[RMDB]
RNA sequence: GGGAACGACUCGAGUAGAGUCGAAAAUGGUGUUAAGUGGAAUAAGUGGAAAAAUAUACAUAUAUGUACAGGGGGCUACAUAUAUGUAUAUGCCCCCUCGCUCCAGUAUAAGUAGGUAUAAGGUGGACGAUACCAGUACUUUCGAGUACUGGUAUCGAAAAGAAACAACAACAACAAC
Reactivity to DMS in 0.01 (KOAc 150mM, MgCl2 10mM, bicine 150mM(pH8.5), 24C), signal-to-noise 3, nucleotides 027 to 126: u020g000g010u000g000u020u010a040a150g020u010g010g000a060a060u020a050a050g020u010g000g000a000a070a060a090a010u000a020u000a000c000a020u010a020u000a000u010g000u010a030c110a120g000g010g000g000g010c150u000a010c000a000u010a000u000a010u000g010u000a010u010a010u000g000c130c030c030c020c010u000c030g000c050u000c020c030a050g000u000a050u010a050a080g020u020a050g000g020u010a050u010a100a070g010g000u010g000g000a220
Reactivity to 2A3 in 0.01 (KOAc 150mM, MgCl2 10mM, bicine 150mM(pH8.5), 24C), signal-to-noise 2, nucleotides 027 to 126: u070g030g040u060g010u110u070a150a100g060u050g090g000a070a140u130a170a020g020u100g050g040a070a070a030a060a010u020a000u010a000c010a000u010a000u010a000u010g000u000a030c110a120g030g000g050g020g000c010u000a000c000a000u020a000u010a000u010g000u000a010u000a010u000g000c000c000c000c000c000u000c010g000c010u000c000c000a000g040u020a030u010a180a030g070u090a040g110g000u060a120u040a110a040g060g000u010g060g010a030

Chemical mapping of a 177-nucleotide RNA with DMS and 2A3. For 2A3, 2,297 sequencing reads were counted. Conditions: 150 mM KOAc, 10 mM MgCl2 and 150 mM bicine (pH 8.5), 24 C. The DMS profile rests on 7,929 reads. It was measured as part of the RMDB library OK1LIB.